[RMDB]
RNA sequence: GGGAACGACUCGAGUAGAGUCGAAAAUGUAGUUUGAUAUUGAGUACCUGUAAGUCAUGUACAGGAUAGGUAGGAGCCAUUGAAAUAGGGACGCUAGUUUCUAUUGAGGCGUUGUUGGGAUACUACCCUUGACUUAUGGUUACUCUAACCCGCUGGCGUUGAAGAUAACCUUCGGGUUAUCUUCAACAAAAGAAACAACAACAACAAC
Reactivity to 2A3 in 0.01 (KOAc 150mM, MgCl2 10mM, bicine 150mM(pH8.5), 24C), signal-to-noise 1, nucleotides 027 to 156: u200g030u050a090g060u110u140u190g140a150u150a120u180u070g000a000g000u000a000c020c000u000g000u000a000a000g000u000c000a010u010g000u030a030c010a000g060g020a020u010a010g000g000u000a010g000g010a090g010c010c000a040u080u050g000a010a010a000u010a010g010g000g000a000c010g030c050u060a020g000u000u000u030c010u000a010u000u010g010a030g000g010c000g010u020u020g010u000u010g050g000g000a020u010a010c000u000a000c000c000c000u000u000g000a000c010u030u000a000u020g010g010u000u000a000c010u000c000u010a030a040c010c010c000g030c010u000g030g010c010
Reactivity to DMS in 0.01 (KOAc 150mM, MgCl2 10mM, bicine 150mM(pH8.5), 24C), signal-to-noise 1, nucleotides 027 to 156: u010g010u010a080g030u000u000u000g000a120u000a120u010u010g010a060g000u000a080c050c010u000g020u000a020a000g000u000c040a040u000g020u000a140c070a060g020g010a030u000a000g010g040u000a040g010g000a080g050c000c010a200u000u000g020a080a090a020u000a020g020g010g010a010c000g000c200u000a070g010u000u000u000c020u000a020u000u010g010a050g070g070c010g000u000u000g010u010u000g000g020g010a160u000a070c020u000a020c030c000c010u000u000g010a000c000u000u020a000u000g010g020u000u010a050c020u000c020u000a100a110c030c000c020g040c050u000g010g020c300